This 177-nucleotide RNA was probed chemically with DMS and 2A3. The reactions ran in a buffer of 150 mM KOAc, 10 mM MgCl2 and 150 mM bicine (pH 8.5), at 24 C. For DMS the reverse transcriptase was MarathonRT. 2A3 adducts were read by reverse transcription with SuperScript II with manganese. The DMS profile rests on 18,509 reads.

[RMDB]
RNA sequence: GGGAACGACUCGAGUAGAGUCGAAAAGAUCUCGUCGACGACCGCGUCAACCGACUUCGCCCGGUAGCUGUCCUUCCCUAGCAUCGCGGACAUGGCCCCGGUGCCGCAGAACGUGCAGCGGUAGGGGCAGAAUCGGUGGAUUCGUCCACCGAUUCUGAAAAGAAACAACAACAACAAC
Reactivity to DMS in 0.01 (KOAc 150mM, MgCl2 10mM, bicine 150mM(pH8.5), 24C), signal-to-noise 7, nucleotides 027 to 126: g000a090u010c030u000c030g010u010c050g000a080c070g010a120c070c060g000c060g020u010c060a130a110c080c040g000a070c080u010u000c070g020c020c030c030g000g020u010a090g010c040u010g000u010c030c040u000u010c000c010c010u020a130g010c090a070u020c040g020c040g010g000a070c090a080u020g020g010c000c000c000c010g010g010u030g010c000c020g000c020a090g000a090a110c120g020u030g020c060a170g010c010g010g000u010a130g000g010g000g010
Reactivity to 2A3 in 0.01 (KOAc 150mM, MgCl2 10mM, bicine 150mM(pH8.5), 24C), signal-to-noise 8, nucleotides 027 to 126: g050a050u040c010u010c040g070u050c030g030a040c020g050a080c020c040g050c010g050u030c040a050a070c020c010g060a030c020u060u040c070g060c010c000c000g010g030u080a040g030c030u040g040u070c000c010u020u040c000c010c000u020a030g010c020a040u060c040g020c040g050g030a060c030a090u150g110g000c020c000c000c000g100g180u190g000c010c000g020c010a030g030a130a050c090g100u140g060c080a030g000c020g010g000u030a060g020g000g010g000